[RMDB]
RNA sequence: GGGAACGACUCGAGUAGAGUCGAAAACAUGUGUGACGCCACCAUGAGUUAUGAGUGCCCUAUGCUGGAUGAGGGAGUGGAACCAGAUGAUGUCGAUUGCUGGUGCAACACGACAUCAACUUGGGUACGGUACGUCGCUAUUCGUAGCGACGUACCGAAAAGAAACAACAACAACAAC
Reactivity to DMS in 0.01 (KOAc 150mM, MgCl2 10mM, bicine 150mM(pH8.5), 24C), signal-to-noise 2, nucleotides 027 to 126: c060a100u010g010u000g010u000g020a110c200g010c110c010a030c030c020a000u020g010a130g000u000u020a080u000g000a110g010u010g020c020c010c020u010a090u010g010c020u020g000g000a060u000g000a120g000g010g010a120g010u010g010g010a200a070c010c040a020g000a100u000g010a020u000g000u000c000g010a300u000u000g000c000u000g020g020u040g000c000a000a010c120a170c010g010a010c010a000u000c000a030a020c020u000u000g020g070g030u000a070
Reactivity to 2A3 in 0.01 (KOAc 150mM, MgCl2 10mM, bicine 150mM(pH8.5), 24C), signal-to-noise 2, nucleotides 027 to 126: c030a040u090g150u000g040u040g140a090c090g100c050c010a010c030c010a060u000g040a020g160u130u120a100u130g110a060g070u080g050c000c000c100u070a110u090g060c070u000g050g050a090u110g040a080g080g030g010a060g020u120g040g000a040a020c030c000a000g020a060u050g000a010u010g000u020c010g020a020u020u030g010c050u170g070g280u300g020c010a000a020c130a040c140g000a000c000a000u000c000a000a040c040u060u060g000g000g000u060a040